The data come from the RNA Mapping Database (RMDB), library M2PK50. This 177-nucleotide RNA was probed chemically with DMS and 2A3. The 2A3 profile rests on 2,323 reads. For 2A3 the reverse transcriptase was SuperScript II with manganese. Reactivities are given for positions 27 through 126. Conditions: 150 mM KOAc, 10 mM MgCl2 and 150 mM bicine (pH 8.5), 24 C.
[RMDB]
RNA sequence: GGGAACGACUCGAGUAGAGUCGAAAACUACAUAAAUUCGUUUAUGUAGCAUCGGGGACGCGCAGACUCCCCGUCAGACGGCUCUAGCCUUCCAUGCUCUGCACUCAACAGCUUUCGAGCUGUUGAACUCUGUGCUAGGGUUCGCCCUAGCACAGAGAAAAGAAACAACAACAACAAC
Reactivity to DMS in 0.01 (KOAc 150mM, MgCl2 10mM, bicine 150mM(pH8.5), 24C), signal-to-noise 1, nucleotides 027 to 126: c000u020a000c000a000u010a000a000a030u000u010c260g020u000u000u000a000u000g000u010a000g020c060a080u010c040g000g000g000g000a040c160g000c150g000c060a000g000a030c070u000c010c000c010c000g020u010c100a040g010a100c070g010g010c010u000c150u010a140g000c010c000u000u010c030c300a110u010g020c080u000c020u000g020c040a220c090u000c000a000a010c010a000g000c000u000u000u000c150g000a020g000c000u010g020u000u000g000a000a050
Reactivity to 2A3 in 0.01 (KOAc 150mM, MgCl2 10mM, bicine 150mM(pH8.5), 24C), signal-to-noise 2, nucleotides 027 to 126: c000u040a000c000a000u020a040a020a030u080u060c120g070u060u010u000a000u010g000u010a000g020c010a090u180c020g000g000g000g000a020c040g070c020g000c180a000g020a100c030u010c000c000c020c000g040u020c010a020g000a030c010g030g020c020u050c100u220a040g030c010c010u030u000c030c010a020u040g000c000u030c020u030g000c010a030c060u020c000a000a010c000a000g030c000u090u110u200c300g170a000g000c000u000g020u010u000g010a000a010